An RNA of 177 nucleotides, treated with 2A3 and DMS and read out base by base.
RNA sequence: GGGAACGACUCGAGUAGAGUCGAAAAUAUGGUAUUUGAAAAUGACUUCUCCGAGUUUGACAGUACUCAGAAUAACUUUUCCCUCGGCCUUGAGUGUGUGGUCAUGGAGGAGUGCGGUAUGCCUCAGAUAGAUUAUCUGGUUCGCCAGAUAAUCUAUAAAAGAAACAACAACAACAAC
Reactivity to 2A3 in 0.01 (KOAc 150mM, MgCl2 10mM, bicine 150mM(pH8.5), 24C), signal-to-noise 4, nucleotides 027 to 126: u270a130u100g000g010u060a130u060u180u150g130a070a060a050a090u150g010a020c000u030u020c010u000c030c030g080a140g170u080u120u100g040a020c000a000g030u040a010c030u010c040a010g090a120a080u130a150a070c050u130u050u070u040c010c010c000u020c070g080g000c020c040u060u030g020a020g000u040g010u170g300u110g200g000u020c020a040u130g010g000a000g000g000a010g000u010g020c030g010g020u060a010u050g000c010c000u050c000a040g020
Reactivity to DMS in 0.01 (KOAc 150mM, MgCl2 10mM, bicine 150mM(pH8.5), 24C), signal-to-noise 6, nucleotides 027 to 126: u000a080u000g010g020u000a030u010u010u010g000a070a060a120a140u010g000a050c010u000u000c020u000c020c010g010a130g020u000u000u010g000a050c050a110g010u000a020c020u000c020a050g010a120a080u010a080a100c130u000u000u000u000c010c010c010u000c160g020g010c060c030u000u000g010a030g000u000g010u010g010u010g000g020u000c020a050u000g000g000a030g010g000a020g020u000g010c070g020g000u000a040u000g010c010c010u010c160a140g000
Notes
For 2A3 the reverse transcriptase was SuperScript II with manganese. It was measured as part of the RMDB library OK2TRN. In probing experiments dimethyl sulfate is read out at A N1 and C N3, which are open when not base-paired. Values cover nucleotides 27 to 126.